[RMDB]
An RNA of 207 nucleotides, treated with 2A3 and DMS and read out base by base. For 2A3, 1,001 sequencing reads were counted. Values cover nucleotides 27 to 156. 2A3 adducts were read by reverse transcription with SuperScript II with manganese.

RNA sequence: GGGAACGACUCGAGUAGAGUCGAAAAAGAUGCAGUUUAUCUAUCAGAAAAAAUAACUAGAAGUGAAAAUGCCAUUAAGUUGUAAGUCUUAUAUGUGGUUUUUGUACAUUGAUUACAUAAGGGAAGCAAUAUCUUUAUACUUUUGUCAUUUUGUGGACAUAAAUGCGGAGUUCGCUCCGCAUUUAUGAAAAGAAACAACAACAACAAC
Reactivity to 2A3 in 0.01 (KOAc 150mM, MgCl2 10mM, bicine 150mM(pH8.5), 24C), signal-to-noise 2, nucleotides 027 to 156: a020g030a000u050g000c020a040g020u090u140u050a140u090c040u040a110u130c040a040g150a050a120a050a040a000a060u130a080a120c090u130a070g060a130a010g030u010g040a110a110a030a060u070g000c000c010a030u010u130a110a000g020u030u020g050u070a060a030g050u020c090u090u150a090u000a030u220g010u020g010g080u020u050u020u110u070g040u020a040c020a020u030u110g040a040u140u010a030c020a020u100a080a000g060g010g000a000a010g000c000a020a040u040a060u210c030u010u180u070a150u070a170c020u000u070u030u080g000u050c010a020u000u020u060u060g090u050g040g000a040
Reactivity to DMS in 0.01 (KOAc 150mM, MgCl2 10mM, bicine 150mM(pH8.5), 24C), signal-to-noise 2, nucleotides 027 to 156: a090g000a060u000g010c060a110g020u000u000u000a110u000c030u010a160u010c030a180g000a020a040a070a090a060a170u010a070a050c040u010a190g020a070a050g000u020g000a100a070a020a070u010g010c040c060a090u000u010a030a190g010u000u010g000u000a030a090g010u020c050u000u000a110u000a050u000g030u010g010g010u000u000u000u000u000g020u000a140c090a110u020u000g010a050u000u000a050c050a040u030a020a210g010g020g030a070a170g010c040a040a070u000a120u000c050u010u000u000a070u010a090c020u000u000u000u000g000u020c050a140u000u000u000u000g000u000g000g030a290